[RMDB]
An RNA of 207 nucleotides, treated with 2A3 and read out base by base.
RNA sequence: GGGAACGACUCGAGUAGAGUCGAAAAUCAUUUGAAGUCGAAAAAGCAUAUGACUUACUAUCAACUAAUGCUCCUGUGGAAGGGUCAAAAACUCUUAAAUGAAGUCCUGCGCUAAAUGUUUGACUUCCAACAGGAUUAUCCUGAAAUUUAACGUACGUCAUGCGGACAGAUUCGUCUGUCCGCAUGAAAAAGAAACAACAACAACAAC
Reactivity to 2A3 in 0.01 (KOAc 150mM, MgCl2 10mM, bicine 150mM(pH8.5), 24C), signal-to-noise 1, nucleotides 027 to 156: u040c030a000u120u000u000g000a040a010g000u010c010g080a010a000a000a100a100g090c090a100u130a040u220g040a030c040u030u040a040c000u100a040u100c040a080a070c060u130a100a100u180g040c000u000c020c130u020g000u010g090g160a000a000g030g040g000u030c030a000a070a070a160a070c030u070c030u040u210a230a300a270u130g030a000a000g010u030c000c030u030g000c040g000c010u130a300a140a000u130g010u040u000u040g000a000c000u000u000c030c000a000a290c000a000g020g000a030u010u000a030u040c000c000u070g160a010a100a100u190u240u190a040a000c060g000u030a030c020g000

It was measured as part of the RMDB library OK3TST. For 2A3, 386 sequencing reads were counted. The RNA was probed in 150 mM KOAc, 10 mM MgCl2 and 150 mM bicine (pH 8.5) at 24 C.